[RMDB]
RNA sequence: GGGAACGACUCGAGUAGAGUCGAAAAUUUACGGUAUUCGUACCGUAAACGAGCAAGCAAGCAGCGCAACGAGACAAGUCGAUAAUAAGAUCGAGCAUGCUGAUAGUAGGAUCUUCGGAUCCUACAACGGAUCAUUAAGGUUCGCCUUAAUGAUCCGAAAAGAAACAACAACAACAAC
Reactivity to 2A3 in 0.01 (KOAc 150mM, MgCl2 10mM, bicine 150mM(pH8.5), 24C), signal-to-noise 4, nucleotides 027 to 126: u010u000u010a000c010g000g000u000a000u040u070c170g030u020a040c000c000g000u010a010a000a010c030g010a040g070c060a070a010g020c020a050a030g050c010a020g030c020g000c070a040a080c060g050a020g030a110c040a080a030g050u050c020g020a010u050a200a060u130a130a140g090a120u030c020g010a010g020c020a040u090g020c020u050g030a060u080a090g010u000a000g000g010a000u000c020u000u040c200g070g000a000u000c000c010u000a000c010a010a000
Reactivity to DMS in 0.01 (KOAc 150mM, MgCl2 10mM, bicine 150mM(pH8.5), 24C), signal-to-noise 3, nucleotides 027 to 126: u010u000u010a010c000g000g000u000a020u000u020c190g030u020a000c000c000g020u000a000a010a030c140g010a180g000c060a070a100g000c070a070a060g000c020a040g030c080g000c070a090a070c090g000a080g020a070c110a060a080g010u000c040g010a070u000a080a070u010a150a110g020a030u000c030g020a070g020c080a080u000g010c050u010g000a090u010a090g000u000a000g000g000a010u000c000u000u010c170g030g010a010u000c000c000u000a000c010a030a150
About this RNA
This 177-nucleotide RNA was probed chemically with 2A3 and DMS. The DMS profile rests on 3,036 reads. DMS adducts were read by reverse transcription with MarathonRT. For 2A3 the reverse transcriptase was SuperScript II with manganese. The RNA was probed in 150 mM KOAc, 10 mM MgCl2 and 150 mM bicine (pH 8.5) at 24 C.